[RMDB]
RNA sequence: GGGAACGACUCGAGUAGAGUCGAAAAGAAAGAAGGCGGGGCGCGUAGAAAUCGCGCAGCACGGCGCAACGUGCAGGCGGAUGCGCGAUUUGAAAAAGUACGCGCUCGCCGCCACCUGCGCCGAAAAGGGUUAACUAAUCUUCGGAUUAGUUAACCCAAAAGAAACAACAACAACAAC
Reactivity to 2A3 in 0.01 (KOAc 150mM, MgCl2 10mM, bicine 150mM(pH8.5), 24C), signal-to-noise 1, nucleotides 027 to 126: g030a020a050a000g080a190a030g040g020c000g000g010g070g010c030g000c000g020u010a030g140a030a040a000u010c020g000c010g000c000a000g030c020a020c010g070g050c100g000c130a190a060c090g020u060g020c010a000g180g010c030g020g060a000u030g000c020g000c010g010a020u010u000u110g150a150a080a000a000a000g080u030a020c000g000c000g000c000u000c000g020c040c000g010c000c000a000c000c000u120g080c070g050c030c010g000a090a000a000a140
Reactivity to DMS in 0.01 (KOAc 150mM, MgCl2 10mM, bicine 150mM(pH8.5), 24C), signal-to-noise 1, nucleotides 027 to 126: g010a190a040a060g010a110a100g010g000c000g000g000g020g010c010g000c020g040u010a020g020a000a000a000u000c000g000c000g050c000a040g050c010a060c020g000g000c150g060c140a140a180c060g000u010g020c080a070g020g000c000g000g010a170u020g000c000g000c000g000a020u020u000u000g000a100a050a150a040a140g000u010a020c000g000c000g000c000u000c060g000c050c000g000c070c020a110c060c000u000g000c000g030c000c000g050a020a060a100a070